This 177-nucleotide RNA was probed chemically with DMS and 2A3.
It was measured as part of the RMDB library OK2TST.
The reactions ran in a buffer of 150 mM KOAc, 10 mM MgCl2 and 150 mM bicine (pH 8.5), at 24 C.
[RMDB]
RNA sequence: GGGAACGACUCGAGUAGAGUCGAAAAGUGACCGUGCAUUUGAGAUAAUCUAGCUCUUUGAAGUGUUCCAAAACGCCUUUCAACUAAAGCUUUUUGCUCUCCUGCGUAAGCAAUAGCUGCAUCAUAGAAUUAUACGACAGUUCGCUGUCGUAUAAUUAAAAGAAACAACAACAACAAC
Reactivity to DMS in 0.01 (KOAc 150mM, MgCl2 10mM, bicine 150mM(pH8.5), 24C), signal-to-noise 7, nucleotides 027 to 126: g010u000g000a130c050c050g010u000g010c030a060u000u010u000g020a110g010a060u010a080a100u000c060u000a070g020c020u000c040u000u010u010g010a060a070g020u000g010u000u000c070c060a040a060a090a100c130g000c050c050u000u000u000c060a050a080c170u010a040a060a110g000c020u000u000u000u010u010g010c020u000c080u000c050c110u000g020c070g010u010a060a070g010c030a030a090u000a050g010c050u000g000c110a060u010c090a110u000a100g000
Reactivity to 2A3 in 0.01 (KOAc 150mM, MgCl2 10mM, bicine 150mM(pH8.5), 24C), signal-to-noise 5, nucleotides 027 to 126: g040u020g030a040c020c030g050u050g000c020a070u040u050u110g040a060g000a030u120a150a060u070c040u040a030g020c000u000c010u060u050u070g060a060a030g020u040g040u080u030c030c000a020a060a030a040c040g010c020c020u060u100u090c040a060a060c040u130a140a040a050g010c000u050u090u010u060u090g020c010u010c010u040c030c030u070g060c050g070u060a040a030g000c020a020a070u030a070g010c020u030g040c000a020u050c010a010u070a090g130